The record gives the reactivity of an RNA of 177 nucleotides to 2A3 and DMS. It was measured as part of the RMDB library TTRDEL. The 2A3 profile rests on 4,960 reads. 2A3 adducts were read by reverse transcription with SuperScript II with manganese.
RNA sequence: GGGAACGACUCGAGUAGAGUCGAAAAGAUAUGGAUUGUAGGGAGAUACCUCUCGGAAACGAGAGAGUAUCAUCGAUCUACGAUCCUAAGUCAAACCUCGAGGACUUGUUCGCAAGUCCUCGAGGAAGAGACUGUACAAGUUCGCUUGUACAGUCUCAAAAGAAACAACAACAACAAC
Reactivity to 2A3 in 0.01 (KOAc 150mM, MgCl2 10mM, bicine 150mM(pH8.5), 24C), signal-to-noise 1, nucleotides 027 to 126: g010a000u010a000u060g000g000a000u010u010g000u000a000g000g010g000a030g000a010u000a000c000c000u010c000u000c020g000g030a010a010a000c020g010a000g010a000g000a000g000u010a000u000c000a000u150c010g000a000u010c010u000a000c000g010a000u000c000c000u000a000a000g020u030c000a070a020a260c000c000u000c010g000a000g000g000a010c020u000u040g100u260u220c300g020c180a010a010g000u040c000c020u020c000g010a000g000g000a000a000
Reactivity to DMS in 0.01 (KOAc 150mM, MgCl2 10mM, bicine 150mM(pH8.5), 24C), signal-to-noise 1, nucleotides 027 to 126: g010a010u000a000u020g010g000a000u010u000g000u000a020g000g000g010a010g020a010u000a000c010c000u000c000u010c010g000g000a000a020a010c010g020a010g000a030g000a030g010u010a010u000c000a270u000c210g000a070u010c000u000a010c000g000a010u000c000c000u000a000a060g000u000c000a170a160a180c000c000u010c010g050a030g030g000a030c000u000u000g020u000u000c180g030c000a000a000g010u000c010c000u000c000g010a010g010g020a020a030
The DMS profile rests on 1,550 reads.